[RMDB]
RNA sequence: GGGAACGACUCGAGUAGAGUCGAAAAGAAUACUUUUAGUACAAGCGAGUACACGCAGUAUAGUGCCACUUGUGUGAGAAUACUUUUAGUACAAGCGAGUACACGCAGCAUACUGCCACUUGUGUGAAACGAGGUGAGGAUUCGUCCUCACCUCGUUAAAAGAAACAACAACAACAAC
Reactivity to 2A3 in 0.01 (KOAc 150mM, MgCl2 10mM, bicine 150mM(pH8.5), 24C), signal-to-noise 2, nucleotides 027 to 126: g010a050a050u200a150c010u130u000u010u050a100g000u050a000c040a080a000g010c010g070a000g040u140a040c020a030c060g060c050a000g020u000a020u050a050g090u080g000c000c010a010c000u110u070g000u060g000u060g080a060g040a060a000u140a070c000u010u060u130u080a080g040u050a000c040a100a000g040c040g010a010g020u000a000c010a000c080g030c000a010g000c000a000u000a020c020u000g010c010c000a060c030u020u000g020u030g000u060g290a070
Reactivity to DMS in 0.01 (KOAc 150mM, MgCl2 10mM, bicine 150mM(pH8.5), 24C), signal-to-noise 1, nucleotides 027 to 126: g000a130a220u060a020c000u000u000u000u000a070g050u060a060c030a070a100g000c010g000a130g010u000a040c070a090c020g010c110a080g040u000a050u000a140g010u020g000c000c030a120c000u000u000g020u000g100u080g000a050g010a200a080u000a010c080u010u020u010u050a080g070u020a000c020a030a260g060c050g000a170g000u020a040c060a080c040g020c000a110g000c230a070u000a000c080u000g010c000c010a040c080u020u000g070u020g000u040g000a110